Chemical mapping of a 207-nucleotide RNA with DMS and 2A3. For DMS, 3,797 sequencing reads were counted. Conditions: 150 mM KOAc, 10 mM MgCl2 and 150 mM bicine (pH 8.5), 24 C. It was measured as part of the RMDB library OK3TST. For 2A3, 1,474 sequencing reads were counted. For 2A3 the reverse transcriptase was SuperScript II with manganese.
[RMDB]
RNA sequence: GGGAACGACUCGAGUAGAGUCGAAAAAAGUCCAUAUGCCCACCUUCGCUGCUCCGGGUGGAUGCUUAUACAUGCUAUGGAUGCCUACAUUUGAAAUAAUGUAGAUGCCUAAUACUCUCUCUCAGGGAGAGAGUUUAGAUGCCUCCAAAGGAGAUGCGAUUUACUACCGUUUCGACGGUAGUAAAUCAAAAGAAACAACAACAACAAC
Reactivity to DMS in 0.01 (KOAc 150mM, MgCl2 10mM, bicine 150mM(pH8.5), 24C), signal-to-noise 2, nucleotides 027 to 156: a020a080g020u000c000c020a060u020a080u010g000c030c000c000a060c020c010u000u010c050g010c000u000g000c030u000c020c010g000g000g040u010g030g000a090u000g010c080u010u000a170u000a140c070a140u000g020c050u010a080u000g020g000a050u010g010c070c000u010a040c000a010u000u000u000g020a120a100a070u020a020a010u010g010u000a010g010a140u010g020c030c040u010a010a080u000a030c010u000c000u000c000u000c000u000c020a210g060g030g000a020g010a030g000a010g010u000u000u010a030g020a150u010g040c010c020u040c010c030a040a120a150g010g010a060g020a060u000g020c170
Reactivity to 2A3 in 0.01 (KOAc 150mM, MgCl2 10mM, bicine 150mM(pH8.5), 24C), signal-to-noise 3, nucleotides 027 to 156: a010a000g100u010c020c010a020u040a030u110g020c000c000c010a000c010c010u060u060c090g060c140u190g020c000u010c010c000g010g010g000u000g000g010a030u170g000c020u070u070a040u040a160c120a090u190g060c040u080a020u070g010g020a040u030g000c000c000u010a000c000a000u050u000u020g150a150a120a070u140a040a020u090g000u000a000g050a050u100g030c000c000u030a050a010u120a100c000u000c000u000c000u000c010u010c110a120g040g300g000a000g000a000g000a000g000u000u000u010a000g000a000u050g050c020c020u060c030c010a080a110a020g010g000a020g010a020u080g060c020